[RMDB]
RNA sequence: GGGAACGACUCGAGUAGAGUCGAAAAGCGCAUGAGCAGGUUCUCACAGCGUGCAACGCGUCCUGUCAACAAUUGCGGGAGCUACAGCAAAAACUUCGAGGCCUGGAGAGCCUCGCCACGAACGCGACGUCGCCUGCAGCUUCGGCUGCAGGCGACGAAAAGAAACAACAACAACAAC
Reactivity to 2A3 in 0.01 (KOAc 150mM, MgCl2 10mM, bicine 150mM(pH8.5), 24C), signal-to-noise 1, nucleotides 027 to 126: g060c000g000c000a000u080g120a010g030c010a010g150g000u160u000c030u000c020a280c020a120g060c080g030u020g000c000a080a080c050g000c000g220u160c000c070u260g010u210c000a030a030c030a240a250u260u210g000c000g050g000g000a060g000c100u230a140c030a000g010c030a000a000a000a000a000c050u160u220c100g080a090g090g000c050c050u090g050g000a160g020a000g000c000c000u010c000g090c000c000a090c200g090a080a000c000g000c000g000a020